[RMDB]
RNA sequence: GGGAACGACUCGAGUAGAGUCGAAAAGACAGUGUUUCGACACUGUCAAAAAGCGUACUACCUCGGGAGCUGGUAUCUACCCACCUCCUCCCAAAUAGGAGGAGAGGAUAUCAGCAUCGAUCGAGGUAUCGCAAAAACGAGUGUUUCGACACUCGAACAAUACCAGUUAGUUCGCUAACUGGUAUUGAAAAGAAACAACAACAACAAC
Reactivity to DMS in 0.01 (KOAc 150mM, MgCl2 10mM, bicine 150mM(pH8.5), 24C), signal-to-noise 4, nucleotides 027 to 156: g020a040c000a010g060u000g010u000u000u000c250g030a200c000a020c010u000g000u000c000a000a020a060a150a110g010c020g000u000a050c090u000a020c000c000u000c040g000g000g000a090g040c000u010g010g000u000a030u010c000u000a070c010c010c030a300c090c000u000c010c000u000c000c000c020a020a160a180u010a050g000g010a050g000g000a030g010a140g000g000a010u000a010u000c010a030g030c000a060u010c140g010a060u010c000g030a050g030g010u000a000u000c010g010c020a080a050a070a100a190c010g010a040g030u000g000u000u000u000c150g010a110c010a010c000u010c000g000a080a140
Reactivity to 2A3 in 0.01 (KOAc 150mM, MgCl2 10mM, bicine 150mM(pH8.5), 24C), signal-to-noise 6, nucleotides 027 to 156: g010a000c010a000g010u010g020u050u120u100c040g010a010c000a000c000u000g030u010c000a010a010a010a010a000g030c030g020u070a070c040u000a000c010c000u000c000g020g020g020a030g010c010u000g000g020u010a000u000c010u030a150c040c070c030a050c020c000u000c000c000u030c010c010c010a220a250a110u260a070g000g000a000g000g010a000g000a010g000g010a000u000a000u010c000a010g020c010a130u060c020g110a110u080c000g000a000g000g010u010a010u030c010g000c010a040a040a010a040a010c010g000a010g010u010g050u050u160u160c150g150a030c000a000c010u000c000g000a040a010